Notes: Chemical mapping of a 207-nucleotide RNA with DMS. It was measured as part of the RMDB library M2RFPK. DMS (dimethyl sulfate) methylates the pairing face of unpaired adenines and cytosines. Conditions: 150 mM KOAc, 10 mM MgCl2 and 150 mM bicine (pH 8.5), 24 C.
[RMDB]
RNA sequence: GGGAACGACUCGAGUAGAGUCGAAAACAUGGGGAACUACAUCUGUGUCGCGAGUUCGAUUCUCGCCAGGGCCUGGUCCUGUAGAUCAGUUGGUAGAGCAAGCUGUUCCCCGGACACUUGUCGUCAUAAAAGUUGCCCCCGUUCGCGGGGGCAACAACGUAUAAUGGCUGUUCGCAGCCAUUAUACGAAAAGAAACAACAACAACAAC
Reactivity to DMS in 0.01 (KOAc 150mM, MgCl2 10mM, bicine 150mM(pH8.5), 24C), signal-to-noise 1, nucleotides 027 to 156: c020a170u020g040g010g020g060a050a040c000u000a020c030a090u000c040u000g000u000g020u000c000g000c020g000a000g010u010u000c030g010a300u000u000c010u010c020g050c070c070a100g000g030g020c130c010u020g030g020u000c060c050u010g040u010a160g000a010u000c030a110g020u020u020g000g010u000a070g030a130g040c030a110a090g000c050u000g000u000u000c010c000c010c030g020g010a030c090a050c160u020u000g000u000c010g010u010c020a080u010a030a080a120a160g020u000u010g010c000c000c000c000c040g070u000u040c230g040c040g000g020g030g090g020c020a000a000c000a030a050